[RMDB]
RNA sequence: GGGAACGACUCGAGUAGAGUCGAAAACUAAUUGGAUGUCUGGAGAACAUCCAAAGCACAGGGCUCCGCAGCCUUACGCUCCAUAUGCAAAGUAUUAGGCAGGACACGUGUGCUUCUGGUCUCCUGGCAGCGUACCCUAUUUCGAUAGGGUACGCUGAAAAGAAACAACAACAACAAC
Reactivity to DMS in 0.01 (KOAc 150mM, MgCl2 10mM, bicine 150mM(pH8.5), 24C), signal-to-noise 2, nucleotides 027 to 126: c090u000a120a090u000u000g010g010a000u000g010u000c000u000g030g060a000g000a190a050c040a060u080c000c070a040a000a020g020c050a070c020a000g000g000g040c300u010c000c050g020c200a130g000c000c000u100u000a170c100g000c070u020c090c030a100u040a190u000g000c150a010a000a020g020u000a290u040u010a040g000g050c000a300g010g010a110c110a100c030g000u010g000u000g000c000u000u000c020u010g010g040u030c000u060c040c000u010g000g000
Reactivity to 2A3 in 0.01 (KOAc 150mM, MgCl2 10mM, bicine 150mM(pH8.5), 24C), signal-to-noise 4, nucleotides 027 to 126: c030u040a050a150u090u070g010g000a010u020g020u010c030u050g030g020a000g010a040a010c000a020u000c000c000a010a000a000g000c000a010c000a020g060g080g040c100u000c020c020g040c190a050g010c000c020u030u000a050c100g040c020u060c070c060a160u220a080u300g090c100a100a080a010g020u010a070u130u100a000g010g010c030a020g010g000a010c020a020c170g230u020g000u000g020c000u050u010c060u060g100g020u020c000u000c000c020u000g100g000
Conditions: 150 mM KOAc, 10 mM MgCl2 and 150 mM bicine (pH 8.5), 24 C.
This 177-nucleotide RNA was probed chemically with DMS and 2A3.
Reactivities are rounded to 0.1 and cut off at 0 and 3.
The data come from the RNA Mapping Database (RMDB), library OK1LIB.
Values cover nucleotides 27 to 126.
The 2A3 profile rests on 2,240 reads.
For DMS the reverse transcriptase was MarathonRT.